[RMDB]
Chemical mapping of a 207-nucleotide RNA with 2A3.
RNA sequence: GGGAACGACUCGAGUAGAGUCGAAAACUACUUGUUCGCAAGUAGAAAAAAUCCUAAGUCCAUGGACAUGAAUACUACCGAAGAACUACUCGGAAACGAGUAGGGAGGGGUAUUCAACAGCCAUGGAUAUGGAAAAAAAGGCCAGUUCGCUGGCCAACCUAUCUUAUCAGUUCGCUGAUAAGAUAGGAAAAGAAACAACAACAACAAC
Reactivity to 2A3 in 0.01 (KOAc 150mM, MgCl2 10mM, bicine 150mM(pH8.5), 24C), signal-to-noise 4, nucleotides 027 to 156: c000u010a000c000u020u010g030u090u150c250g010c110a000a010g000u050a000g140a050a060a000a010a010a030u040c010c010u030a080a010g020u000c000c000a000u020g010g090a150c010a110u040g040a000a010u000a010c040u200a300c000c020g230a300a030g000a020a020c010u010a000c000u000c000g010g060a020a110a030c000g010a000g000u000a000g000g000g010a010g000g000g000g010u000a000u000u000c000a000a010c050a030g030c000c000a000u000g000g000a000u000a000u000g000g010a020a040a030a010a030a050a140g010g000c020c000a000g020u080u090c200g100c120u000g010g010c000c000a000a000
Background
The data come from the RNA Mapping Database (RMDB), library RNAMAK. The 2A3 profile rests on 2,879 reads.